RNA sequence: GGGAACGACUCGAGUAGAGUCGAAAAGGCGAGAUGCGCGUGGGCUGGGCGAGGCCCGAGCUGAGGCCUGAUGUAGAGCUGGGAGCUGACGAGCUGGCCUAUGUCUUCAAUGGGCACCGCGUGGGUACGCCCUGUACACAUUCGUGUGUACAGGGCGAAAAGAAACAACAACAACAAC
Reactivity to 2A3 in 0.01 (KOAc 150mM, MgCl2 10mM, bicine 150mM(pH8.5), 24C), signal-to-noise 1, nucleotides 027 to 126: g040g050c040g030a040g040a200u140g030c020g000c010g040u100g030g010g020c030u060g020g000g040c050g040a130g140g000c000c030c010g000a090g000c030u050g000a070g070g030c000c000u040g020a060u090g030u140a040g000a030g050c050u060g000g050g100a030g060c020u000g060a070c060g050a050g040c000u040g020g000c000c010u020a070u130g050u000c000u080u030c070a080a170u130g010g000g000c000a020c040c000g030c040g040u110g020g040g000u030a030
Reactivity to DMS in 0.01 (KOAc 150mM, MgCl2 10mM, bicine 150mM(pH8.5), 24C), signal-to-noise 2, nucleotides 027 to 126: g000g000c070g010a100g000a080u000g010c010g030c080g040u000g010g010g000c050u010g010g030g000c110g000a140g000g000c010c000c020g000a030g020c040u020g020a210g020g000c020c030u010g000a060u000g030u000a050g000a120g000c040u010g000g010g020a110g030c020u000g000a150c130g010a130g040c030u000g020g000c010c010u000a030u010g010u010c050u000u010c110a080a090u000g010g000g020c010a100c060c040g000c050g000u010g000g000g020u000a150
The record gives the reactivity of an RNA of 177 nucleotides to 2A3 and DMS. For 2A3 the reverse transcriptase was SuperScript II with manganese. Values cover nucleotides 27 to 126. For DMS the reverse transcriptase was MarathonRT. The RNA was probed in 150 mM KOAc, 10 mM MgCl2 and 150 mM bicine (pH 8.5) at 24 C. The data come from the RNA Mapping Database (RMDB), library OK2TST.